[RMDB]
RNA sequence: GGGAACGACUCGAGUAGAGUCGAAAAGUGAGACAGUUCGGUCCAUAUCCGGUGUGGGCGUUAGAGCAUUGAGAGGACCUUUCCCUAGUACGAGAGGACCGGGAAGGACGCACCUCUGGUGUGCCAGCAUUGCUUGAGGUUUCGACCUCAAGCAAUGAAAAGAAACAACAACAACAAC
Reactivity to DMS in 0.01 (KOAc 150mM, MgCl2 10mM, bicine 150mM(pH8.5), 24C), signal-to-noise 5, nucleotides 027 to 126: g020u000g010a120g020a080c080a080g010u000u010c100g020g000u000c010c040a060u000a100u010c030c030g020g010u010g040u000g010g000g020c060g030u000u000a060g010a230g010c040a030u000u000g000a040g010a040g020g000a190c090c010u000u000u010c010c010c000u000a070g010u000a130c020g000a240g000a170g010g000a080c230c170g000g010g010a030a020g000g010a140c080g020c240a040c010c010u000c030u000g000g000u000g020u010g000c020c040a150g010
Reactivity to 2A3 in 0.01 (KOAc 150mM, MgCl2 10mM, bicine 150mM(pH8.5), 24C), signal-to-noise 3, nucleotides 027 to 126: g130u080g030a180g010a040c030a050g050u030u200c040g050g020u000c000c000a040u030a040u150c070c050g130g020u130g000u080g070g020g020c030g020u070u160a080g020a020g030c030a040u020u100g220a070g010a020g040g040a170c000c000u000u060u000c010c000c000u010a020g040u010a010c030g020a020g010a040g100g020a000c000c040g030g010g000a020a020g000g010a030c070g030c080a120c000c000u060c020u020g030g010u060g000u050g030c040c010a020g050
The record gives the reactivity of an RNA of 177 nucleotides to DMS and 2A3. For 2A3, 3,219 sequencing reads were counted. The data come from the RNA Mapping Database (RMDB), library OK2TRN. For DMS, 6,037 sequencing reads were counted. For 2A3 the reverse transcriptase was SuperScript II with manganese. Conditions: 150 mM KOAc, 10 mM MgCl2 and 150 mM bicine (pH 8.5), 24 C.